An RNA of 207 nucleotides, treated with 2A3 and DMS and read out base by base. The reactions ran in a buffer of 150 mM KOAc, 10 mM MgCl2 and 150 mM bicine (pH 8.5), at 24 C. For 2A3 the reverse transcriptase was SuperScript II with manganese. The data come from the RNA Mapping Database (RMDB), library M2RFOK. DMS adducts were read by reverse transcription with MarathonRT.
[RMDB]
RNA sequence: GGGAACGACUCGAGUAGAGUCGAAAAUGGGCUACCAGUAAGCGAAAAAUGAUACAGGACGAAAAUAACAUAAUUCGAGAUUUUUCAGGAUGGAUUUUUUUAGGUAUCUAUCAAAACUAUUCUGAUGCAACGUAGAGCACGUUCGCGUGCUCUACAAGUACUUAGGAAGGUUCGCCUUCCUAAGUACAAAAGAAACAACAACAACAAC
Reactivity to 2A3 in 0.01 (KOAc 150mM, MgCl2 10mM, bicine 150mM(pH8.5), 24C), signal-to-noise 4, nucleotides 027 to 156: u080g000g000g020c020u040a040c030c010a050g060u090a030a050g030c050g080a070a020a030a040a040u120g020a040u080a090c050a040g080g050a020c020g060a040a030a050a050u120a130a030c040a060u150a080a110u100u080c060g010a020g020a170u080u090u050u110u090c000a000g000g000a000u010g040g010a050u000u020u020u010u000u020u030a010g040g010u160a080u190c010u010a010u020c030a000a010a000a030c000u010a020u020u030c010u010g020a030u040g040c020a060a060c050g000u000a000g000a010g000c000a000c000g010u040u060c170g000c000g060u000g000c000u000c000u000a000c000a000a000
Reactivity to DMS in 0.01 (KOAc 150mM, MgCl2 10mM, bicine 150mM(pH8.5), 24C), signal-to-noise 2, nucleotides 027 to 156: u010g000g000g030c020u000a130c050c020a130g000u010a080a130g000c020g010a020a070a110a160a100u000g010a160u000a060c040a070g000g000a100c030g020a100a080a090a130u010a110a100c040a110u000a040a170u000u020c070g010a200g000a180u000u010u010u010u000c000a030g010g000a030u000g000g000a010u000u020u020u000u070u000u000a030g020g000u010a110u010c020u000a060u000c050a040a020a020a080c040u000a060u000u000c020u000g020a050u000g010c100a050a120c080g020u000a010g020a020g020c040a040c000g040u000u030c250g060c020g010u010g030c000u000c000u000a000c000a010a090